[RMDB]
RNA sequence: GGGAACGACUCGAGUAGAGUCGAAAACUGGCUGAUGUUGAAGCGGACGUCGCAGCACGUGCUGAUGACGAAGGCUUCAUCACAUUAAAGAACAAUCUAUAUAGAUUGGUUUGGCAUGUUGAGCGUACCUAACAGACUUGUUCGCAAGUCUGUUAGGAAAAGAAACAACAACAACAAC
Reactivity to 2A3 in 0.01 (KOAc 150mM, MgCl2 10mM, bicine 150mM(pH8.5), 24C), signal-to-noise 2, nucleotides 027 to 126: c000u040g090g020c060u080g030a170u090g030u060u020g000a000a000g000c020g030g080a040c000g000u000c000g000c020a000g000c010a070c290g140u290g020c000u030g010a250u130g000a010c000g000a050a010g010g000c000u000u000c010a000u000c000a010c000a010u150u170a120a080a030g080a010a000c000a000a000u010c010u000a140u020a030u110a300g000a030u000u040g060g020u060u030u020g030g020c030a010u050g000u040u090g080a000g000c070g040u010a050
Reactivity to DMS in 0.01 (KOAc 150mM, MgCl2 10mM, bicine 150mM(pH8.5), 24C), signal-to-noise 2, nucleotides 027 to 126: c040u010g010g050c140u000g010a080u010g000u000u000g000a040a020g000c000g000g000a300c010g000u010c000g030c000a010g010c010a240c300g000u030g000c000u000g000a020u010g010a010c010g030a010a300g020g000c010u000u000c000a010u000c080a010c050a100u000u000a090a100a090g000a070a050c020a010a000u000c000u000a200u010a180u020a040g010a000u000u000g000g010u000u010u000g020g000c140a050u000g010u010u010g000a040g040c060g010u000a070